Source: RMDB library TTRDEL, as collected in RNAgym. Chemical mapping of a 177-nucleotide RNA with 2A3 and DMS.
RNA sequence: GGGAACGACUCGAGUAGAGUCGAAAAGAUAUGGACAAAUGGGAGCUGAUGGCUCCCCACCUCGGAAACGAGAGGCCAUACCAGCGAAGAACAUUUGUCCUAAGUCAAACGACCCUUCGGGGUCGAACUUACUAGGUUGGUUCGCCAACCUAGUAAGAAAAGAAACAACAACAACAAC
Reactivity to 2A3 in 0.01 (KOAc 150mM, MgCl2 10mM, bicine 150mM(pH8.5), 24C), signal-to-noise 1, nucleotides 027 to 126: g030a030u190a100u300g000g000a010c000a010a010a000u010g030g000g000a020g000c000u020g000a010u000g030g010c010u090c000c000c010c010a080c000c020u020c000g000g030a070a010a000c020g000a000g010a030g030g000c010c000a070u140a300c180c000a000g020c000g270a300a020g030a040a010c000a010u000u020u040g000u000c010c010u000a080a000g070u060c060a120a160a180c020g000a000c010c000c000u030u040c300g000g010g000g000u000c000g010a010a010
Reactivity to DMS in 0.01 (KOAc 150mM, MgCl2 10mM, bicine 150mM(pH8.5), 24C), signal-to-noise 2, nucleotides 027 to 126: g010a080u020a180u000g010g010a000c010a010a020a010u000g010g010g010a030g020c000u010g000a070u000g000g010c030u020c110c010c010c050a120c120c010u000c020g000g020a070a060a140c020g000a010g020a170g040g000c000c000a040u000a120c220c040a020g030c040g010a150a210g020a130a140c010a000u000u000u000g000u000c000c010u000a090a050g000u010c030a060a120a280c040g010a000c000c000c000u000u000c130g030g010g010g030u010c010g000a010a100
Description: For DMS, 1,376 sequencing reads were counted.